[RMDB]
Structure probing data (2A3 and DMS) for a 207-nucleotide construct. The reactions ran in a buffer of 150 mM KOAc, 10 mM MgCl2 and 150 mM bicine (pH 8.5), at 24 C. Source: RMDB library M2RFOK, as collected in RNAgym. DMS adducts were read by reverse transcription with MarathonRT. 2A3 adducts were read by reverse transcription with SuperScript II with manganese. Values are in units of 0.01, from 0 to 300, in steps of 10. Values cover nucleotides 27 to 156.
RNA sequence: GGGAACGACUCGAGUAGAGUCGAAAAUCAGAAUCAGGCCGGAGUGUUUAGCGCGCCGUAAACACGGUCGUACAUCCAGCCGGUAGCCUGGUUCCUUGCAUUGAGUGAUGUACGGAGUUUAUAGAGCAAAAGAAAGACCUGUUCGCAGGUCUUUCAAGUUUCAGAAUAUCUUCGGAUAUUCUGAAACAAAAGAAACAACAACAACAAC
Reactivity to 2A3 in 0.01 (KOAc 150mM, MgCl2 10mM, bicine 150mM(pH8.5), 24C), signal-to-noise 3, nucleotides 027 to 156: u110c010a010g030a010a010u020c000a000g020g000c000c000g030g020a080g070u140g030u050u130u160a090g040c030g010c020g010c030c030g020u040a020a110a000c110a020c040g040g020u060c000g000u020a030c020a030u000c020c020a020g060c010c030g000g000u040a020g010c000c000u010g020g010u020u030c010c020u020u080g030c030a100u030u100g060a060g080u130g030a030u050g020u030a030c040g050g010a060g040u100u120u020a150u130a060g070a020g040c050a100a020a040a050g010a000a000a000g000a000c000c000u010g010u020u050c120g010c070a000g000g000u000c000u000u000u000c000a000a000
Reactivity to DMS in 0.01 (KOAc 150mM, MgCl2 10mM, bicine 150mM(pH8.5), 24C), signal-to-noise 1, nucleotides 027 to 156: u000c030a110g000a060a060u010c030a050g000g000c000c020g020g000a100g020u010g000u000u000u000a140g050c080g010c030g010c020c040g040u000a060a040a100c100a100c030g000g010u000c000g060u000a030c020a060u000c000c030a210g020c000c030g010g010u000a120g030c080c000u000g020g010u000u000c010c030u000u000g000c060a100u020u000g000a200g000u000g020a060u000g020u010a060c030g000g010a100g010u000u000u000a120u000a130g000a170g030c050a070a070a100a220g000a010a020a020g000a010c000c000u000g020u000u010c300g050c000a030g020g000u000c000u000u000u000c000a030a130